[RMDB]
RNA sequence: GGGAACGACUCGAGUAGAGUCGAAAACGCCGCAAUUCAUGCUGCUUGCAGCCUCUGAAUUUUGUUAAAUGAGGGUUAGUUUGACUGUAUAAAUACAGUCUUGCUUUCUGACCCUGGUAGCUGCUCACCCUGAUGCUGCUGUCAAUAGACAGGAUAGGUUAGUUCCAAAGUUCGCUUUGGAACUAACAAAAGAAACAACAACAACAAC
Reactivity to DMS in 0.01 (KOAc 150mM, MgCl2 10mM, bicine 150mM(pH8.5), 24C), signal-to-noise 2, nucleotides 027 to 156: c070g010c060c050g070c110a050a040u000u000c040a040u010g010c000u010g010c020u000u000g000c020a010g000c020c010u000c000u060g020a010a000u000u000u000u000g010u000u000a050a080a150u000g020a080g010g000g010u000u000a010g020u010u000u000g020a050c000u000g020u000a300u010a100a140a210u010a010c000a010g000u000c000u000u000g000c080u000u000u020c070u000g010a030c000c000c020u020g000g010u000a040g000c020u000g010c050u000c090a120c030c010c000u010g000a130u010g040c000u000g000c000u000g030u000c040a100a160u020a130g020a240c070a100g000g000a160u000a070g020
Reactivity to 2A3 in 0.01 (KOAc 150mM, MgCl2 10mM, bicine 150mM(pH8.5), 24C), signal-to-noise 3, nucleotides 027 to 156: c060g050c000c030g030c020a000a020u010u010c000a000u100g000c020u000g000c000u090u180g030c000a000g000c010c000u010c010u000g010a010a000u060u070u060u100g030u020u080a070a100a090u180g050a030g000g010g010u010u020a000g010u020u050u050g000a000c000u000g060u050a060u050a240a300a060u150a030c000a000g000u000c010u000u020g020c010u090u180u030c050u090g050a040c000c000c000u010g010g030u030a040g020c020u020g000c020u030c020a070c010c020c020u040g060a090u100g040c040u040g000c000u020g020u020c000a070a150u040a080g020a020c020a020g060g090a100u090a090g180
An RNA of 207 nucleotides, treated with DMS and 2A3 and read out base by base. The RNA was probed in 150 mM KOAc, 10 mM MgCl2 and 150 mM bicine (pH 8.5) at 24 C.